[RMDB]
RNA sequence: GGGAACGACUCGAGUAGAGUCGAAAACGCGGCUAGCUACGUACGGCUACGUAGCAUAUCGAUGCAUCGCGCGAUGCAUUAGCAUGCCGUAUACGUAUAGCGCAUGCGCAUAUAUCGUAGCCGUAGCAGAGAGUGGCGAAUUCGUUCGCCACUCUCUAAAAGAAACAACAACAACAAC
Reactivity to DMS in 0.01 (KOAc 150mM, MgCl2 10mM, bicine 150mM(pH8.5), 24C), signal-to-noise 2, nucleotides 027 to 126: c100g000c030g030g000c030u010a040g050c010u000a060c100g020u000a030c010g020g010c040u000a030c000g000u000a130g000c170a040u000a030u000c230g020a030u000g040c010a000u010c000g010c300g030c270g000a020u000g020c010a030u000u000a110g020c140a000u000g010c030c020g000u010a030u010a110c160g010u000a080u000a110g020c100g030c020a050u000g000c000g010c140a070u000a100u000a050u010c050g020u000a000g000c000c020g030u000a040g000c120
Reactivity to 2A3 in 0.01 (KOAc 150mM, MgCl2 10mM, bicine 150mM(pH8.5), 24C), signal-to-noise 2, nucleotides 027 to 126: c040g010c040g080g000c060u070a030g000c000u030a030c020g090u020a010c020g040g000c050u010a000c000g020u050a000g010c040a030u060a020u080c070g020a000u000g030c000a020u000c040g050c090g060c230g290a010u010g010c000a000u040u020a050g030c020a010u060g020c030c010g020u040a050u030a020c080g080u100a030u120a080g090c150g020c040a000u030g010c000g000c030a000u060a000u040a030u200c050g000u010a000g050c010c000g000u020a010g000c080
The record gives the reactivity of an RNA of 177 nucleotides to DMS and 2A3. For 2A3, 2,605 sequencing reads were counted. DMS adducts were read by reverse transcription with MarathonRT. The RNA was probed in 150 mM KOAc, 10 mM MgCl2 and 150 mM bicine (pH 8.5) at 24 C. Values cover nucleotides 27 to 126.